Source: RMDB library OK1LIB, as collected in RNAgym.
The record gives the reactivity of an RNA of 177 nucleotides to DMS.

RNA sequence: GGGAACGACUCGAGUAGAGUCGAAAAGAAAGAAAGAAGCUGCCGUAACCAACUGUUAGUGUGAAGUUGGAAUAUGUGCAACACACGAAAGCGCAAAAUCACCGACGGCAGCACAAGAGAGAUAGAAAAAUCCCGACUGAUUCGUCAGUCGGGAUUUAAAAGAAACAACAACAACAAC
Reactivity to DMS in 0.01 (KOAc 150mM, MgCl2 10mM, bicine 150mM(pH8.5), 24C), signal-to-noise 2, nucleotides 027 to 126: g040a190a080a120g000a200a190a050g040a020a210g040c000u000g170c000c000g000u000a050a190c020c000a050a000c040u000g000u050u140a000g000u060g060u000g000a050a040g000u020u000g000g000a170a150u030a100u000g030u000g030c120a020a090c100a190c140a110c270g000a030a130a160g010c000g000c040a000a050a100a110u030c070a060c120c000g030a000c000g030g000c020a000g000c040a000c140a140a120g000a020g040a230g000a060u110a050g000a070a200

Notes:
Conditions: 150 mM KOAc, 10 mM MgCl2 and 150 mM bicine (pH 8.5), 24 C.